Overview
Structure probing data (2A3 and DMS) for a 177-nucleotide construct. For DMS the reverse transcriptase was MarathonRT. The data come from the RNA Mapping Database (RMDB), library TTRDES. The reactions ran in a buffer of 150 mM KOAc, 10 mM MgCl2 and 150 mM bicine (pH 8.5), at 24 C. The 2A3 profile rests on 2,467 reads.
RNA sequence: GGGAACGACUCGAGUAGAGUCGAAAAGAUAUGGAUGUAAGGACAUGAAUGUGGUGUCGGAAACGACACCCAUUCAACAGCCUUGACAUCCUAAGUCAAAAGCUAUCAUUGUUCGCAAUGAUAGCAACUACUCCAAAACCUUCGGGUUUUGGAGUAGAAAAGAAACAACAACAACAAC
Reactivity to 2A3 in 0.01 (KOAc 150mM, MgCl2 10mM, bicine 150mM(pH8.5), 24C), signal-to-noise 1, nucleotides 027 to 126: g000a000u040a030u080g000g000a000u000g000u000a010a030g020g010a090c160a300u300g000a020a020u080g120u300g090g010u000g020u000c020g070g000a030a010a010c010g010a000c030a000c000c000c010a000u000u000c000a000a020c070a010g020c000c000u070u000g110a030c000a000u000c000c020u020a060a020g040u000c040a050a040a070a050g000c000u000a010u000c000a000u000u010g060u080u170c300g010c140a000a000u030g000a000u000a000g000c000a010a000
Reactivity to DMS in 0.01 (KOAc 150mM, MgCl2 10mM, bicine 150mM(pH8.5), 24C), signal-to-noise 2, nucleotides 027 to 126: g000a040u010a300u000g000g000a020u000g010u000a030a020g010g010a010c090a300u020g010a010a000u010g020u020g020g030u010g000u020c010g020g010a070a050a130c000g010a000c020a000c000c000c000a000u000u000c030a030a080c300a130g000c000c020u000u000g000a010c000a010u000c000c000u010a020a080g020u010c050a120a060a270a210g000c000u000a000u000c010a000u000u000g000u010u030c260g020c000a010a000u000g010a010u000a000g000c020a030a070